[RMDB]
RNA sequence: GGGAACGACUCGAGUAGAGUCGAAAACAGCGCUUCCAAUUUCUCUUUGCAACACAGGUACUCGUCGAACGAGCGGCUCUCUACCUGGGGGAUAUCUAUACCAGAGCGAAAGAUGAGAAACCAGCUAGCGUCUAACCAGGUUCGCCUGGUUAGACGCAAAAGAAACAACAACAACAAC
Reactivity to 2A3 in 0.01 (KOAc 150mM, MgCl2 10mM, bicine 150mM(pH8.5), 24C), signal-to-noise 2, nucleotides 027 to 126: c050a000g010c060g000c060u040u020c010c020a110a140u010u140u040c040u000c030u000u040u110g000c090a150a030c010a000c040a070g000g050u060a010c000u020c090g090u050c100g060a060a080c070g000a010g000c050g050g020c000u020c000u000c000u110a180c000c000u010g000g000g010g000g000a060u010a030u140c050u020a150u020a020c010c000a000g000a010g020c000g020a050a020a030g050a090u130g050a010g070a080a100a030c000c000a000g010c000u000a000